[RMDB]
RNA sequence: GGGAACGACUCGAGUAGAGUCGAAAAAAGAUAUGGACAAUUUGUCAGUUGCACGGUGCAAUGAUGACGACUCGGAAACGAGUCGUUUGAGCACGAGUGCAACUUGGAUUUAAUUGUCCUAAGUCAACGACCAUACUUAGUUCGCUAAGUAUGGUCGAAAAGAAACAACAACAACAAC
Reactivity to DMS in 0.01 (KOAc 150mM, MgCl2 10mM, bicine 150mM(pH8.5), 24C), signal-to-noise 2, nucleotides 027 to 126: a120a100g000a060u010a300u010g000g000a000c000a000a030u000u000u000g000u000c000a020g010u010u000g010c000a010c000g000g010u000g000c010a210a130u010g000a140u000g000a030c000g000a000c000u020c000g000g000a130a060a190c010g010a020g010u000c000g010u000u000u000g040a130g020c000a000c000g020a110g020u000g010c000a000a000c030u000u020g040g000a020u000u020u000a000a000u000u000g010u000c000c000u010a030a080g020u000c030a150a160
Reactivity to 2A3 in 0.01 (KOAc 150mM, MgCl2 10mM, bicine 150mM(pH8.5), 24C), signal-to-noise 3, nucleotides 027 to 126: a000a000g070a050u120a070u150g010g000a010c010a010a010u010u020u050g020u040c060a070g010u010u010g000c030a010c010g020g010u000g000c070a300a300u160g050a040u100g030a070c000g010a000c000u000c000g000g000a040a090a060c000g000a000g000u000c010g000u000u010u010g000a010g040c010a010c060g100a130g010u000g000c000a000a010c000u000u080g000g010a000u080u300u300a030a010u000u010g000u010c000c000u010a110a010g060u040c030a050a080